The data come from the RNA Mapping Database (RMDB), library TTRDES. This 177-nucleotide RNA was probed chemically with 2A3 and DMS.

RNA sequence: GGGAACGACUCGAGUAGAGUCGAAAAGAUAUGGAAGAUACUUGGACAUGCUGUGGUGUCGGAAACGACACGCACAGCAACAGCCAAGGUAUCUUCCUAAGUCAAAACCCCUGGUUCGCCAGGGGAAGAUUCCCCAAUGGUUCGCCAUUGGGGAAUCAAAAGAAACAACAACAACAAC
Reactivity to 2A3 in 0.01 (KOAc 150mM, MgCl2 10mM, bicine 150mM(pH8.5), 24C), signal-to-noise 2, nucleotides 027 to 126: g000a010u080a010u110g000g010a000a010g000a020u010a020c000u000u000g010g040a030c040a260u300g030c000u000g000u010g000g000u010g010u000c020g000g000a050a090a020c000g000a000c010a020c080g120c030a000c000a000g040c010a000a000c020a000g010c000c000a010a040g090g030u020a000u000c000u000u000c000c000u000a020a000g020u000c040a020a040a130a300c030c010c000c010u020g040g100u060u090c300g110c080c000a000g010g000g010g020a000a010
Reactivity to DMS in 0.01 (KOAc 150mM, MgCl2 10mM, bicine 150mM(pH8.5), 24C), signal-to-noise 2, nucleotides 027 to 126: g000a050u020a300u000g000g000a010a000g020a020u000a020c010u010u000g000g010a070c140a300u000g000c000u000g010u000g020g000u000g000u000c000g020g010a080a140a180c000g030a020c010a020c000g010c010a000c010a010g000c000a010a030c230a170g000c010c000a000a030g000g030u010a030u000c000u000u010c000c000u000a010a040g000u000c000a110a100a130a120c020c000c020c010u000g010g020u000u000c270g000c020c000a020g020g000g020g010a000a000
The reactions ran in a buffer of 150 mM KOAc, 10 mM MgCl2 and 150 mM bicine (pH 8.5), at 24 C. DMS adducts were read by reverse transcription with MarathonRT. For 2A3, 3,720 sequencing reads were counted. Values cover nucleotides 27 to 126. The DMS profile rests on 1,855 reads.